[RMDB]
RNA sequence: GGGAACGACUCGAGUAGAGUCGAAAAACAAUAGGAUGGCAAAAGGGGACCAUCGGGUCCGUCGUUCCAUCCUUUUCUUACCUUGUGGCCGGCAUGGCCCCAGCCUCCUCGCUGGCGCCGGCUGGGCGUCGUGGCGCUUUCGAGCGCCACAAAAGAAACAACAACAACAAC
Reactivity to 2A3 in 0.01 (KOAc 150mM, MgCl2 10mM, bicine 150mM(pH8.5), 24C), signal-to-noise 4, nucleotides 027 to 129: a000c120a060a060u080a050g000g000a000u020g000g010c100a040a000a140a120g040g050g000g010a030c020c060a170u300c240g120g010g000u010c000c030g160u060c030g030u050u040c010c000a000u000c000c000u010u020u040u020c010u020u050a100c020c010u060u080g020u100g070g010c000c000g000g050c030a070u110g010g000c000c000c000c000a000g000c020c040u100c070c000u090c020g050c080u090g090g030c050g010c000c010g050g000c020u050g010g000g010c040g030u060c020
Reactivity to DMS in 0.01 (KOAc 150mM, MgCl2 10mM, bicine 150mM(pH8.5), 24C), signal-to-noise 3, nucleotides 027 to 129: a050c140a060a010u020a010g000g020a060u040g020g060c300a000a000a000a000g000g020g000g000a000c030c020a190u120c020g060g030g010u020c020c000g030u020c110g020u070u020c020c000a040u030c000c000u060u000u000u070c150u000u020a140c130c080u020u040g040u000g080g000c060c020g040g020c030a080u070g010g020c050c140c000c020a060g000c000c030u120c120c110u090c200g020c100u000g070g030c000g000c050c090g010g020c010u030g000g000g030c170g040u020c050